[RMDB]
RNA sequence: GGGAACGACUCGAGUAGAGUCGAAAAGGAGGACGAAGCAUAUUUCUGUUUCUGGAGGAUUAUUUAUAAUCUGCCGGAAAGUCUUGCAGGUGGCUGGGAUAUGUUCAGUCUGCUAGAAUUAAGCACGAAAACGUGUCCUUGUUCGCAAGGACACGAACCAUUCUCUGCUCUUCGGAGCAGAGAAUGGAAAAGAAACAACAACAACAAC
Reactivity to 2A3 in 0.01 (KOAc 150mM, MgCl2 10mM, bicine 150mM(pH8.5), 24C), signal-to-noise 1, nucleotides 027 to 156: g080g010a030g020g000a000c030g020a020a000g000c030a030u020a050u120u040u080c080u080g040u010u020u000c000u000g010g020a040g010g000a000u000u000a030u010u240u000a110u060a090a000u040c040u060g080c020c000g020g050a090a050a050g020u070c040u130u160g000c030a040g010g100u030g080g000c030u020g000g040g000a060u050a060u120g050u040u030c060a020g080u010c000u010g000c000u010a020g100a080a030u140u180a060a040g060c030a020c150g080a020a030a000a050c010g040u020g000u000c000c000u000u000g030u070u050c130g010c120a010a000g010g000a000c010a000c000g000a000a000